[RMDB]
RNA sequence: GGGAACGACUCGAGUAGAGUCGAAAAAGCCAGGGCCACUUUCUCUCUGCUCCAUCGGUGUGGGCAGCUCAGACUCACAAUGCCCAAGAGAGCACAUAAGGUUCUGUGUCACUUUGCCAUAUGAGCUGCCUUACUGGCCAGAACCUUACCUUAGUCCGGUCGGCCGGGACUUCGGUCCCGGCCGACCAAAAGAAACAACAACAACAAC
Reactivity to 2A3 in 0.01 (KOAc 150mM, MgCl2 10mM, bicine 150mM(pH8.5), 24C), signal-to-noise 1, nucleotides 027 to 156: a000g050c040c020a050g000g000g000c000c000a040c020u000u020u010c010u020c020u020c040u040g060c010u030c060c000a110u090c120g080g050u110g030u050g050g010g010c010a010g000c000u000c030a070g020a230c020u030c060a130c020a020a190u140g050c000c020c030a000a010g060a000g000a010g040c060a020c010a150u120a020a020g010g010u000u030c000u020g110u040g010u090c010a020c050u140u180u130g060c020c020a100u080a090u250g020a000g010c000u000g000c010c010u020u200a120c090u030g010g000c000c020a000g000a000a010c000c000u030u030a050c010c000u050u020a020g010u000c030c020